An RNA of 207 nucleotides, treated with 2A3 and DMS and read out base by base. 2A3 adducts were read by reverse transcription with SuperScript II with manganese. Source: RMDB library OK3TST, as collected in RNAgym. The 2A3 profile rests on 3,466 reads.
RNA sequence: GGGAACGACUCGAGUAGAGUCGAAAAGAAGCCAAGAGAAGAGAGCAUUUUAAAGAGGGAUAUUUAUGUUCACUUGGGUUAAAUCAUGCUGCCAGGCCGGGUAUGAUGAAAACAGAGAAGUGACCGUUGAUUUGGCAAUGUGGAAGGCAUUAGUGUCGCCAUAUCUUAGGUUCGCCUAAGAUAUGGCAAAAGAAACAACAACAACAAC
Reactivity to 2A3 in 0.01 (KOAc 150mM, MgCl2 10mM, bicine 150mM(pH8.5), 24C), signal-to-noise 5, nucleotides 027 to 156: g070a030a000g020c030c010a040a000g050a000g010a080a020g050a000g010a000g000c030a040u040u070u120u270a070a110a020g060a040g020g050g010a020u020a060u110u200u040a080u120g040u050u030c030a010c040u010u030g110g000g000u040u030a030a090a020u030c010a010u020g030c020u030g070c030c020a060g060g020c070c040g030g000g000u090a030u070g030a000u030g030a140a080a020a010c030a000g110a010g040a130a010g020u020g010a020c010c020g030u030u040g050a110u070u020u100g010g030c020a030a030u100g000u040g040g040a040a010g020g000c010a010u050u070a040g070u040g060u070c050
Reactivity to DMS in 0.01 (KOAc 150mM, MgCl2 10mM, bicine 150mM(pH8.5), 24C), signal-to-noise 2, nucleotides 027 to 156: g000a090a100g020c000c040a040a060g020a120g000a060a110g000a100g010a110g030c010a100u000u000u000u000a040a050a140g010a120g010g030g020a080u000a050u010u000u000a030u010g020u010u000c010a050c060u020u000g000g060g010u000u000a040a200a080u000c010a030u010g010c020u010g030c020c000a130g000g070c050c020g020g000g000u000a010u000g000a050u000g000a120a070a080a120c050a110g010a130g020a000a080g030u000g000a060c070c020g010u010u000g010a090u000u010u000g010g010c050a020a060u000g010u010g020g030a070a080g000g010c020a030u000u000a110g040u000g000u000c030